About this RNA: The record gives the reactivity of an RNA of 177 nucleotides to DMS and 2A3. DMS adducts were read by reverse transcription with MarathonRT. High 2A3 reactivity points to a flexible backbone, as in loops and unpaired stretches. The reactions ran in a buffer of 150 mM KOAc, 10 mM MgCl2 and 150 mM bicine (pH 8.5), at 24 C.
[RMDB]
RNA sequence: GGGAACGACUCGAGUAGAGUCGAAAAAAAGAUAUGGACGUGAACUACCGUUCUGUGAUGAGACAUCGAUCUAAUUUCGGAAACGAAAUUAGGGAGUCUUGCAUGGACGGCACGUCCUAAGUCAAAAGUACAUACCUAGGUUCGCCUAGGUAUGUACAAAAGAAACAACAACAACAAC
Reactivity to DMS in 0.01 (KOAc 150mM, MgCl2 10mM, bicine 150mM(pH8.5), 24C), signal-to-noise 4, nucleotides 027 to 126: a050a050a060g000a040u000a300u010g000g000a040c000g010u010g000a050a050c060u010a300c030c000g000u010u000c000u010g040u000g010a110u010g000a000g000a020c000a240u000c210g020a090u020c000u000a000a000u000u010u000c010g010g000a080a090a190c000g020a010a010a010u000u000a000g010g010g000a040g000u000c000u000u000g010c000a020u000g000g010a010c000g000g020c010a000c010g010u000c000c000u000a020a060g000u000c020a050a090a130a110
Reactivity to 2A3 in 0.01 (KOAc 150mM, MgCl2 10mM, bicine 150mM(pH8.5), 24C), signal-to-noise 5, nucleotides 027 to 126: a000a000a000g080a030u110a050u130g000g010a000c000g020u000g020a090a070c120u180a090c300c020g070u230u050c050u050g070u000g060a300u120g010a030g010a010c040a250u300c180g070a040u030c030u000a020a000u010u010u000c020g010g000a040a060a040c000g000a010a000a000u020u010a000g020g000g000a020g010u000c020u010u010g000c000a020u030g000g010a000c000g000g000c000a000c010g000u000c000c000u000a080a010g030u000c020a000a030a040a160